This 177-nucleotide RNA was probed chemically with 2A3 and DMS.
For DMS, 1,508 sequencing reads were counted.
Values cover nucleotides 27 to 126.
Conditions: 150 mM KOAc, 10 mM MgCl2 and 150 mM bicine (pH 8.5), 24 C.
The 2A3 profile rests on 1,546 reads.
It was measured as part of the RMDB library OK2TRN.
RNA sequence: GGGAACGACUCGAGUAGAGUCGAAAAUCGGCCUUCCACUCUUUGAGGUUGAGGGUGGGUGAGGAGUCGGUGACCAGCAGUUCGGUGACGUCGAAGCCAAUGCCGCCGGCGCCGACGACAGCCACGGCCGGGAUUUAGUAUUCGUACUAAAUCCCGGAAAAGAAACAACAACAACAAC
Reactivity to 2A3 in 0.01 (KOAc 150mM, MgCl2 10mM, bicine 150mM(pH8.5), 24C), signal-to-noise 2, nucleotides 027 to 126: u070c000g030g000c010c000u040u010c020c000a020c000u020c020u110u040u260g180a190g090g060u070u100g040a020g020g030g020u040g010g000g010u090g060a090g020g080a040g000u030c000g000g000u040g080a300c000c000a020g000c010a010g010u060u200c120g050g000u050g050a100c140g220u170c130g100a110a010g000c000c020a060a000u250g000c020c020g000c000c020g010g000c000g030c000c020g020a000c010g010a010c010a030g030c000c000a030c080g030g000
Reactivity to DMS in 0.01 (KOAc 150mM, MgCl2 10mM, bicine 150mM(pH8.5), 24C), signal-to-noise 2, nucleotides 027 to 126: u000c080g000g000c010c020u000u000c010c020a030c010u000c010u010u000u000g030a090g010g020u010u000g010a030g010g000g030u000g010g010g000u010g010a120g020g010a220g000u000c010g000g030u000g010a140c010c010a090g030c050a070g020u000u000c300g030g010u010g000a140c090g000u000c170g010a110a300g000c000c030a050a070u000g010c010c040g020c030c070g010g010c050g000c010c010g010a000c010g000a070c050a110g010c050c020a110c150g020g010